[RMDB]
RNA sequence: GGGAACGACUCGAGUAGAGUCGAAAAUAAGACAGAGAGUGGCUUUGAGUGGGGUAAGCCUAAUGUGCCCUGUAUAGUUUAUAGGAAUUGUACUCUCCGAACAGGCCUUAGGGUAAGACACCCGACACAAUUUAAGCGAUUUCGAUCGCUUAAAUUGAAAAGAAACAACAACAACAAC
Reactivity to DMS in 0.01 (KOAc 150mM, MgCl2 10mM, bicine 150mM(pH8.5), 24C), signal-to-noise 4, nucleotides 027 to 126: u010a080a090g010a110c050a050g000a130g000a070g030u000g010g010c060u010u010u000g010a120g060u000g010g010g010g020u000a060a160g020c010c020u000a040a060u000g010u010g000c130c010c030u000g010u000a090u010a090g020u000u000u000a080u000a150g000g010a050a070u000u010g020u000a050c100u010c100u000c050c040g000a070a080c100a080g000g000c010c040u000u000a060g010g010g020u010a080a110g010a110c150a070c010c000c020g010a070c190a200
Reactivity to 2A3 in 0.01 (KOAc 150mM, MgCl2 10mM, bicine 150mM(pH8.5), 24C), signal-to-noise 2, nucleotides 027 to 126: u070a010a020g010a000c020a030g060a000g000a020g160u040g050g000c040u120u120u070g040a080g010u080g000g000g000g010u040a030a030g030c000c010u040a080a070u090g040u080g020c000c010c000u000g020u000a140u040a050g070u060u150u080a190u100a040g100g060a030a030u050u050g040u040a070c020u050c000u010c110c020g000a030a030c000a040g060g030c010c020u040u070a030g000g030g000u040a050a020g040a000c040a020c030c010c000g100a000c040a000

Conditions: 150 mM KOAc, 10 mM MgCl2 and 150 mM bicine (pH 8.5), 24 C.
This 177-nucleotide RNA was probed chemically with DMS and 2A3.
For 2A3, 1,554 sequencing reads were counted.
For DMS the reverse transcriptase was MarathonRT.